[RMDB]
RNA sequence: GGGAACGACUCGAGUAGAGUCGAAAAGGACGUUAAGCAUUUAUCAUUGAACUAUAAUUGUUCAUUGAAGUCAUUGAUGCAAACUCCUUGGUCACACACACAUACGGCGCGGAAGGCGUGUUUGCUGGAUCACUAGGUUUUUCGAAACCUAGUGAUCAAAAGAAACAACAACAACAAC
Reactivity to DMS in 0.01 (KOAc 150mM, MgCl2 10mM, bicine 150mM(pH8.5), 24C), signal-to-noise 8, nucleotides 027 to 126: g000g000a030c210g020u000u010a080a140g010c010a010u000u000u000a070u010c000a010u000u000g000a010a010c000u010a110u020a120a120u030u010g010u000u000c000a000u000u000g000a020a110g010u030c300a140u010u020g010a010u000g010c010a100a030a030c010u000c010c000u000u000g000g020u010c030a040c050a060c090a070c110a060c080a070u010a080c090g010g010c060g030c030g000g010a090a110g000g020c060g010u000g000u000u000u010g010c030u000g000
Reactivity to 2A3 in 0.01 (KOAc 150mM, MgCl2 10mM, bicine 150mM(pH8.5), 24C), signal-to-noise 9, nucleotides 027 to 126: g020g000a010c130g020u040u030a150a050g000c000a010u040u060u070a140u050c010a010u000u010g000a000a000c030u030a040u170a300a220u260u160g000u000u000c000a000u020u020g030a050a010g070u140c080a100u040u280g030a010u010g010c000a000a040a040c000u000c000c000u000u010g030g030u060c000a030c000a010c000a000c000a000c010a130u100a170c060g050g000c020g000c020g080g100a100a020g110g010c020g010u040g040u020u040u060g060c040u040g040